[RMDB]
RNA sequence: GGGAACGACUCGAGUAGAGUCGAAAAUCCUAAGUCAAGGUGGAGACAUCCUAAAGCGACGACGUAUGUCGGAAACGACAUACAUCAGCUUUAGUGAUGUCGAUGAAACCUUGAUAUGGAAAACUCUCUGGUGCAGGUUCGCCUGCACCAGAGAGAACUCUACAUCUCGAUUCGUCGAGAUGUAGAGAAAAGAAACAACAACAACAAC
Reactivity to 2A3 in 0.01 (KOAc 150mM, MgCl2 10mM, bicine 150mM(pH8.5), 24C), signal-to-noise 2, nucleotides 027 to 156: u020c020c000u040a120a020g000u000c000a010a010g000g020u000g000g030a010g000a010c000a000u000c000c000u000a000a000a000g020c030g220a210c120g000a000c040g100u000a000u000g000u010c000g050g040a070a060a090c000g000a000c000a000u000a000c000a020u010c010a020g000c000u010u000u000a020g010u200g040a000u000g000u000c000g000a000u010g010a010a010a010c000c000u000u010g000a000u000a040u040g020g000a060a010a090a090c000u000c000u000c000u040g060g060u010g010c000a000g010g060u090u240c230g240c100c000u020g020c000a000c000c000a000g000a000g000a000g010a000a000
Chemical mapping of a 207-nucleotide RNA with 2A3.
2A3 adducts were read by reverse transcription with SuperScript II with manganese.
The data come from the RNA Mapping Database (RMDB), library RNAMAK.
The RNA was probed in 150 mM KOAc, 10 mM MgCl2 and 150 mM bicine (pH 8.5) at 24 C.
The 2A3 profile rests on 1,724 reads.